[RMDB]
RNA sequence: GGGAACGACUCGAGUAGAGUCGAAAAUCAGUUCAAACCCCGUACAGUCACUGACGCAAUCUUCGUCCACUGUAGUGCAACCCAACCGUCUCAGGACAUCGGGGUAGACACUAUCCGCAUGUGGCACCCUAGUAGGUUAAUUCGUUAACCUACUAGGAAAAGAAACAACAACAACAAC
Reactivity to DMS in 0.01 (KOAc 150mM, MgCl2 10mM, bicine 150mM(pH8.5), 24C), signal-to-noise 9, nucleotides 027 to 126: u020c080a070g020u010u020c110a070a120a120c040c000c000c020g000u040a070c130a070g000u020c070a080c050u000g000a050c100g010c150a100a090u020c060u010u020c060g000u030c020c030a040c070u000g000u000a020g000u000g000c170a110a100c000c000c010a070a210c260c100g000u000c040u010c150a140g000g000a020c020a060u010c300g000g000g000g020u010a030g000a260c060a030c010u010a040u010c120c260g030c070a050u040g030u000g000g000c050a110c150
Reactivity to 2A3 in 0.01 (KOAc 150mM, MgCl2 10mM, bicine 150mM(pH8.5), 24C), signal-to-noise 9, nucleotides 027 to 126: u060c010a020g060u080u070c100a110a080a270c010c010c000c020g040u120a100c040a060g020u030c040a020c160u050g050a020c020g020c070a050a170u070c060u130u090c050g080u030c020c010a040c050u060g040u100a030g020u020g030c010a040a120c010c000c000a030a080c050c040g070u030c030u030c090a090g080g030a030c010a040u100c090g020g000g010g000u010a010g010a010c020a000c020u040a050u080c040c040g060c080a060u140g020u030g050g000c030a070c010
Structure probing data (DMS and 2A3) for a 177-nucleotide construct.
The DMS profile rests on 23,655 reads.
It was measured as part of the RMDB library OK1LIB.
DMS adducts were read by reverse transcription with MarathonRT.
High DMS reactivity at an A or C suggests that its Watson-Crick edge is free.